Chemical mapping of a 177-nucleotide RNA with DMS and 2A3. The 2A3 profile rests on 11,398 reads. The DMS profile rests on 17,358 reads. The data come from the RNA Mapping Database (RMDB), library OK2TST.

RNA sequence: GGGAACGACUCGAGUAGAGUCGAAAAGAAUCUGCGUUCUGUUCGAGCUAAGCUGGCACACGAGGCGGCUCGUCAGGAGUCAGCUUUUGAAAAGUUCGAAGCUGCAUUUGCAGCUCGCAACUUAGUACACUAAAGCGAUAUUCGUAUCGCUUUAGUGAAAAGAAACAACAACAACAAC
Reactivity to DMS in 0.01 (KOAc 150mM, MgCl2 10mM, bicine 150mM(pH8.5), 24C), signal-to-noise 9, nucleotides 027 to 126: g000a080a060u000c040u000g010c100g010u000u000c010u000g000u010u000c020g010a040g010c030u000a070a150g020c020u000g010g030c110a100c190a100c130g010a200g010g010c090g000g000c010u000c000g010u000c060a030g000g010a060g000u000c000a020g010c080u000u000u010u000g010a100a100a050a020g010u000u000c010g010a060a070g020c000u000g010c000a300u010u010u010g020c000a000g000c000u000c010g000c210a010a010c010u000u000a070g010u010a200
Reactivity to 2A3 in 0.01 (KOAc 150mM, MgCl2 10mM, bicine 150mM(pH8.5), 24C), signal-to-noise 6, nucleotides 027 to 126: g030a020a060u050c030u070g010c030g110u040u040c010u020g090u110u070c010g010a010g000c010u130a130a020g000c010u070g120g040c110a070c020a020c210g060a050g030g000c020g040g000c010u000c000g000u000c010a020g000g030a010g060u010c010a000g000c000u060u060u050u070g170a190a160a010a010g010u010u000c010g020a080a020g000c000u010g000c020a170u090u150u300g000c010a000g000c000u000c000g010c010a000a010c010u020u050a040g050u030a060